Chemical mapping of a 177-nucleotide RNA with 2A3 and DMS.
The DMS profile rests on 1,072 reads.
Source: RMDB library OK2TRN, as collected in RNAgym.
The RNA was probed in 150 mM KOAc, 10 mM MgCl2 and 150 mM bicine (pH 8.5) at 24 C.
DMS adducts were read by reverse transcription with MarathonRT.

[RMDB]
RNA sequence: GGGAACGACUCGAGUAGAGUCGAAAACUUGAGUUUAGGAAUCUAACUCCUGGGAAUACCAAUACUCGUGUGUCUAGGUAUACUAGCACAGCUCGCCACCGCCUGCGCCGCGGCGCGGAUGGGACUGACUUAGGCCUUUGUUCGCAAAGGCCUAAGUAAAAGAAACAACAACAACAAC
Reactivity to 2A3 in 0.01 (KOAc 150mM, MgCl2 10mM, bicine 150mM(pH8.5), 24C), signal-to-noise 1, nucleotides 027 to 126: c000u020u060g010a080g100u070u060u150a020g020g090a300a150u180c040u020a050a040c010u000c030c040u080g000g100g070a150a080u150a260c060c000a040a020u070a130c080u070c100g140u050g010u000g100u110c010u000a040g000g040u100a090u090a300c020u000a000g000c000a000c000a010g100c030u120c070g100c040c000a020c000c040g020c000c000u040g000c040g160c050c110g120c060g020g060c050g010c010g060g010a040u040g000g000g070a070c050u080g020
Reactivity to DMS in 0.01 (KOAc 150mM, MgCl2 10mM, bicine 150mM(pH8.5), 24C), signal-to-noise 1, nucleotides 027 to 126: c070u000u000g020a020g000u000u000u000a070g010g020a170a130u000c050u010a060a050c040u010c040c080u000g000g020g000a180a090u000a130c010c000a070a100u000a080c080u020c090g020u000g020u000g000u020c020u010a030g010g010u000a110u050a110c020u000a000g000c020a030c020a050g050c150u000c040g000c050c020a050c020c000g000c030c010u010g030c010g050c110c030g020c180g010g020c010g000c060g000g020a060u000g000g000g000a100c120u000g020